[RMDB]
RNA sequence: GGGAACGACUCGAGUAGAGUCGAAAAGACCGCUGAAUGCGGAAGUACUAGAUCAACUAGAAAGUAGAUUAAUACAAAAGCUACGUCUCGAAACUAGUUGAUCUAGUCCACUCGAGACGUAGUAAGAAUGGUCAUUAGCUUUCGAGCUAAUGACCAUAAAAGAAACAACAACAACAAC
Reactivity to DMS in 0.01 (KOAc 150mM, MgCl2 10mM, bicine 150mM(pH8.5), 24C), signal-to-noise 2, nucleotides 027 to 126: g000a160c000c010g000c000u040g010a160a090u130g000c000g000g030a060a080g030u050a050c060u000a020g000a010u000c000a000a000c000u000a020g000a220a170a120g000u020a010g010a230u090u010a090a000u020a120c080a040a050a100a130g010c000u000a000c120g000u000c020u010c000g010a080a140a090c000u000a000g000u000u000g000a010u000c010u000a000g000u000c040c030a030c150u000c000g000a000g020a000c000g040u000a080g020u000a090a030g000a070
Reactivity to 2A3 in 0.01 (KOAc 150mM, MgCl2 10mM, bicine 150mM(pH8.5), 24C), signal-to-noise 2, nucleotides 027 to 126: g040a000c000c000g000c000u070g300a300a120u300g000c000g010g010a000a040g000u020a020c030u000a000g000a010u050c000a050a000c020u000a000g020a100a190a000g130u160a020g040a280u190u200a160a020u220a210c100a030a080a000a000g000c000u000a000c080g020u000c000u000c050g100a110a250a160c030u010a000g000u020u020g000a000u040c000u000a000g000u000c000c000a060c000u010c000g000a000g000a000c000g000u000a000g010u050a070a060g040a000